[RMDB]
RNA sequence: GGGAACGACUCGAGUAGAGUCGAAAAAGCAUCUCCGGGUCAUAUAUUGUUACUGGUCGUCAACUGCAGCCUUUAUAUCAAGCGCUCGGCAUCCCGUCAGAUCUUGCUGCGCGUGCCGGCCGGCUCGUCCAGCGAAGUGAUUCGUCACUUCGCUGGAAAAAGAAACAACAACAACAAC
Reactivity to DMS in 0.01 (KOAc 150mM, MgCl2 10mM, bicine 150mM(pH8.5), 24C), signal-to-noise 1, nucleotides 027 to 126: a130g020c080a070u000c020u000c000c050g010g000g030u030c080a040u000a070u000a110u020u000g030u000u010a090c080u000g010g020u000c050g020u000c040a040a070c060u020g010c070a050g040c050c090u030u020u000a060u010a100u020c090a050a220g000c090g000c050u000c020g010g040c060a060u000c010c020c000g040u000c070a040g000a060u020c110u000u010g000c000u000g040c130g000c120g040u010g030c060c060g010g000c070c050g050g020c020u000c090g010